[RMDB]
RNA sequence: GGGAACGACUCGAGUAGAGUCGAAAAUUGAAUAUUGGGCUGUACCAGAUGGUUGGGCUUGGUGGGCUAAUUUCUGACUUGCCCUAUCCAAGCUUAGAGUUGGAUCAUGUGGCCCAAUUGAAGAAAUGGACUACUUGAUUCGUAAAGUGGGGCGGAAGACAAUAAACCUGUUCGCAGGUUUAUUGUCAAAAGAAACAACAACAACAAC
Reactivity to DMS in 0.01 (KOAc 150mM, MgCl2 10mM, bicine 150mM(pH8.5), 24C), signal-to-noise 2, nucleotides 027 to 156: u000u000g020a080a160u000a020u010u010g010g040g010c030u000g010u000a100c080c010a130g010a090u010g030g010u030u010g000g010g030c010u010u000g020g040u010g000g000g030c020u000a030a070u000u010u010c160u030g000a090c120u000u000g000c000c000c030u000a080u020c020c010a020a030g000c000u000u010a040g010a120g050u010u000g030g010a050u010c050a070u000g030u000g010g020c020c000c000a010a040u000u000g000a270a150g020a060a070a150u010g010g010a080c010u000a030c020u000u000g000a080u000u000c050g030u010a030a060a100g030u000g010g000g020g040c060g000g000a120a250
Reactivity to 2A3 in 0.01 (KOAc 150mM, MgCl2 10mM, bicine 150mM(pH8.5), 24C), signal-to-noise 3, nucleotides 027 to 156: u030u050g020a070a040u030a040u070u000g010g010g000c010u000g000u080a100c020c010a060g100a210u110g090g120u100u060g030g000g010c010u020u010g010g010u010g010g020g060c050u090a060a110u070u290u200c170u120g120a110c040u040u080g000c000c000c000u060a040u050c000c010a000a000g000c000u000u020a010g010a000g030u020u100g040g010a040u070c020a030u140g050u090g070g000c010c010c010a010a000u000u000g020a010a020g030a050a070a030u120g030g010a010c010u010a000c020u040u040g020a020u030u030c000g040u070a100a080a020g070u090g000g010g000g020c000g010g030a050a080